An RNA of 207 nucleotides, treated with 2A3 and read out base by base. The 2A3 profile rests on 1,128 reads. Conditions: 150 mM KOAc, 10 mM MgCl2 and 150 mM bicine (pH 8.5), 24 C.
RNA sequence: GGGAACGACUCGAGUAGAGUCGAAAAACGGUUCGUCUUUCGAGACGAACCGUAAAAAACCUUUGUGAUAGGGAGCGUUUACUAUCCCAUUGGGAUAGGUAACACGCGAAGAACUAUCACUCUGGUAAAAAUGUGGCGUAGUUCGCUACGCCACAAAUCUACUUGCAGUGUUCGCACUGCAAGUAGAAAAAGAAACAACAACAACAAC
Reactivity to 2A3 in 0.01 (KOAc 150mM, MgCl2 10mM, bicine 150mM(pH8.5), 24C), signal-to-noise 1, nucleotides 027 to 156: a000c020g000g000u030u000c030g070u030c020u070u160u100c230g090a050g000a000c000g020a010a000c000c000g010u020a000a000a000a010a000a000c030c000u020u000u000g000u000g040a000u010a000g030g020g010a030g010c000g000u000u000u000a020c020u000a000u000c010c010c130a280u090u300g010g000g000a010u010a030g000g100u050a000a030c070a000c160g010c030g030a150a020g000a000a010c000u000a000u000c000a000c010u030c000u000g020g030u140a090a150a030a000a010u060g010u000g000g000c000g010u000a010g010u020u020c220g040c150u000a000c000g010c010c010a000c040a000a000a000